[RMDB]
RNA sequence: GGGAACGACUCGAGUAGAGUCGAAAAGUUUACUUCGGUAAACAUCUGGGGGUCUCGAGGUUUCCGAGGGACAUGAGCCUGAAGCCUCCACGGGCUCAACAGCCUACCCACCGGAAACCUCGAGACGGAGGCACCCUCUCUAUUGGUUCGCCAAUAAUCACUGAUUUUCAUUCGUGAAAAUCAGUGAAAAAGAAACAACAACAACAAC
Reactivity to 2A3 in 0.01 (KOAc 150mM, MgCl2 10mM, bicine 150mM(pH8.5), 24C), signal-to-noise 1, nucleotides 027 to 156: g000u000u000u000a010c020u000u080c160g100g000u000a010a000a000c000a030u040c140u140g000g000g000g000g000u000c000u000c000g000a010g030g000u010u030u000c010c020g080a300g030g040g010a000c030a140u030g000a000g010c010c030u020g030a070a010g020c010c000u020c000c000a000c030g000g000g000c000u000c000a010a070c000a010g120c010c040u100a090c040c050c080a100c140c070g000g000a010a000a010c030c000u000c000g000a000g000a000c010g000g000a000g000g050c020a020c000c000c000u030c020u040c020u020a020u020u040g010g080u050u120c170g090c060c000a010a020u180a040a100

This 207-nucleotide RNA was probed chemically with 2A3. High 2A3 reactivity points to a flexible backbone, as in loops and unpaired stretches. The 2A3 profile rests on 958 reads. Reactivities are given for positions 27 through 156.